[RMDB]
This 177-nucleotide RNA was probed chemically with 2A3. The reactions ran in a buffer of 150 mM KOAc, 10 mM MgCl2 and 150 mM bicine (pH 8.5), at 24 C. For 2A3, 833 sequencing reads were counted.
RNA sequence: GGGAACGACUCGAGUAGAGUCGAAAACCGACACUCUGCGCCUCUUUGAGCUGACGAUAACCGUGAGGUUGGCGACGCGAAAUAGUCACGAGGCCAUCGGUUCAUGCCCGGUAAGGCGUCACCAUGCCCCCACGAUACGUUUCGACGUAUCGUGGGGAAAAGAAACAACAACAACAAC
Reactivity to 2A3 in 0.01 (KOAc 150mM, MgCl2 10mM, bicine 150mM(pH8.5), 24C), signal-to-noise 2, nucleotides 027 to 126: c000c000g040a020c070a030c100u010c010u030g050c040g030c010c000u060c070u000u050u090g120a070g010c010u020g060a030c050g000a000u000a100a140c010c000g050u080g070a100g090g000u040u050g010g000c020g030a010c030g000c000g020a160a000a000u080a010g060u040c040a000c090g000a060g000g000c000c000a070u020c060g000g020u030u040c050a000u160g060c000c010c060g040g000u130a160a010g030g000c010g040u030c000a000c110c020a050u110g000c000